[RMDB]
RNA sequence: GGGAACGACUCGAGUAGAGUCGAAAAGAUAUGGAUAGUUACCAAGGGUGAUGACCUCGGAAACGAGCAAGCCUGGUACUGCUAUCCUAAGUCAAAACCAAAUGAUGUCUUCGGACAUCAUUUGGAAGAUGUUUACAGGGUUCGCCCUGUAAACAUCAAAAGAAACAACAACAACAAC
Reactivity to 2A3 in 0.01 (KOAc 150mM, MgCl2 10mM, bicine 150mM(pH8.5), 24C), signal-to-noise 4, nucleotides 027 to 126: g030a010u040a020u140g000g000a010u000a020g040u090u090a020c040c100a210a300g190g000g050u100g030a300u160g110a170c040c000u000c010g040g000a080a030a010c010g010a000g000c020a100a060g020c000c010u020g020g000u030a060c140u050g040c000u000a000u010c000c000u000a120a020g070u020c030a000a000a090a190c000c000a000a010a010u010g000a010u000g000u000c000u050u190c300g130g000a000c000a010u010c000a000u010u000u000g000g000a000a060
Reactivity to DMS in 0.01 (KOAc 150mM, MgCl2 10mM, bicine 150mM(pH8.5), 24C), signal-to-noise 3, nucleotides 027 to 126: g010a020u010a300u000g000g020a020u000a010g020u000u010a030c020c000a070a190g030g030g010u010g010a160u020g020a110c300c010u010c000g020g000a090a100a140c010g000a010g010c040a090a210g010c000c010u020g020g000u010a020c300u010g010c010u000a010u000c000c020u000a060a100g000u010c040a080a040a100a170c000c000a010a010a010u000g000a000u000g000u000c000u010u010c190g030g010a010c000a000u000c000a000u010u000u000g010g000a050a070